Chemical mapping of a 177-nucleotide RNA with DMS and 2A3. It was measured as part of the RMDB library TTRDEL. For 2A3 the reverse transcriptase was SuperScript II with manganese. For 2A3, 1,725 sequencing reads were counted. For DMS the reverse transcriptase was MarathonRT. Values cover nucleotides 27 to 126.

RNA sequence: GGGAACGACUCGAGUAGAGUCGAAAAGAUAUGGAUAACCUUGAAGGUGUCAUGCUUUGAUCUCGGAAACGAGGGAGCAUGCACUGGAGUUAUCCUAAGUCAAAAGGGAAACGUUCGCGUUUCCCAAGACUGCAGAGAAGUUCGCUUCUCUGCAGUCAAAAGAAACAACAACAACAAC
Reactivity to DMS in 0.01 (KOAc 150mM, MgCl2 10mM, bicine 150mM(pH8.5), 24C), signal-to-noise 2, nucleotides 027 to 126: g000a070u000a300u000g020g000a000u000a020a010c000c300u000u020g000a140a160g000g010u000g000u010c000a000u000g000c000u000u000u000g000a090u000c000u010c000g000g010a120a030a120c020g000a000g010g000g000a000g020c000a000u000g010c030a000c000u020g000g020a070g010u000u000a010u000c000c000u010a030a160g000u000c040a100a110a120a040g000g000g000a020a000a000c000g040u020u030c250g000c000g000u000u000u000c000c000c000a030a020
Reactivity to 2A3 in 0.01 (KOAc 150mM, MgCl2 10mM, bicine 150mM(pH8.5), 24C), signal-to-noise 2, nucleotides 027 to 126: g000a010u080a070u120g000g020a020u010a000a040c000c050u070u170g070a120a040g040g000u040g220u300c030a000u010g000c000u300u300u100g110a120u060c000u000c040g040g020a090a060a030c020g000a000g020g000g000a000g000c000a000u010g000c000a000c010u000g000g010a080g020u010u010a010u000c020c000u020a160a000g040u070c060a020a030a070a140g020g040g020a020a000a020c040g020u080u090c270g020c000g200u010u010u000c030c000c000a000a010